[RMDB]
RNA sequence: GGGAACGACUCGAGUAGAGUCGAAAAAGGAGUGGAAGGCGGGGAGGGCGGGGAGGAGUGUUACCCCACGGGAACUGCUGAGUGCCCCUGACGUCCAGACCCUCCCCCGUCCGGGAGAAUGGAGAUUGAGCGCGCUGGUUCGCCAGCGCGAAAAGAAACAACAACAACAAC
Reactivity to 2A3 in 0.01 (KOAc 150mM, MgCl2 10mM, bicine 150mM(pH8.5), 24C), signal-to-noise 1, nucleotides 027 to 129: a010g170g000a090g010u150g100g070a160a040g000g000c040g000g020g000g000a170g000g110g020c000g000g040g000g000a050g000g000a170g000u160g000u000u060a050c000c000c000c000a030c000g080g000g010a030a020c000u050g040c130u040g090a000g080u050g000c000c000c000c040u010g020a000c000g000u000c000c000a100g000a100c000c000c000u060c030c000c000c000c000g030u110c000c000g010g000g000a000g000a000a000u160g000g000a100g060a080u010u190g030a070g030
Reactivity to DMS in 0.01 (KOAc 150mM, MgCl2 10mM, bicine 150mM(pH8.5), 24C), signal-to-noise 1, nucleotides 027 to 129: a070g060g010a190g000u060g080g100a180a080g000g000c120g070g000g080g040a120g000g000g050c120g010g000g070g000a030g000g000a070g060u050g000u000u010a190c070c000c000c090a140c220g030g030g030a040a050c190u040g000c150u120g030a010g040u010g010c040c030c080c050u000g070a160c150g000u000c000c040a050g000a230c130c000c020u140c000c080c030c000c120g060u000c000c130g010g000g030a120g020a090a100u050g000g000a040g000a000u000u000g000a090g020